[RMDB]
RNA sequence: GGGAACGACUCGAGUAGAGUCGAAAAGAAAGAGAGAAAGUUCAUUGUUUAUCGGAAACUUUAAACUAUAACCAUUCAAACUUUUCCAGAAGUUAGUUUGAAUAGAAAUUAAAAAGAAACUUCUGAAUGACCUUGGCACCGUUCGCGGUGCCAAGAAGGAGAACAUUUAGUUCGCUAAAUGUUCUCCAAAAGAAACAACAACAACAAC
Reactivity to 2A3 in 0.01 (KOAc 150mM, MgCl2 10mM, bicine 150mM(pH8.5), 24C), signal-to-noise 1, nucleotides 027 to 156: g040a000a050a020g070a000g040a010g070a000a100a040g030u010u080c040a060u090u120g110u140u160u120a060u220c140g000g010a120a000a030c010u090u060u050a070a070a000c000u060a040u060a260a040c040c020a010u000u010c010a000a000a000c000u000u000u000u030c080c000a000g000a000a000g000u000u000a000g000u020u000u000g010a020a000u070a130g000a010a050a060u200u170a010a070a030a000a000g000a000a000a000c000u000u020c000u000g010a000a040u160g020a010c000c000u000u000g000g040c000a000c030c000g060u090u070c110g040c070g110g000u000g000c000c000a000a000g000a000a010

Notes
Structure probing data (2A3) for a 207-nucleotide construct. The reactions ran in a buffer of 150 mM KOAc, 10 mM MgCl2 and 150 mM bicine (pH 8.5), at 24 C. Values are in units of 0.01, from 0 to 300, in steps of 10. 2A3 adducts were read by reverse transcription with SuperScript II with manganese.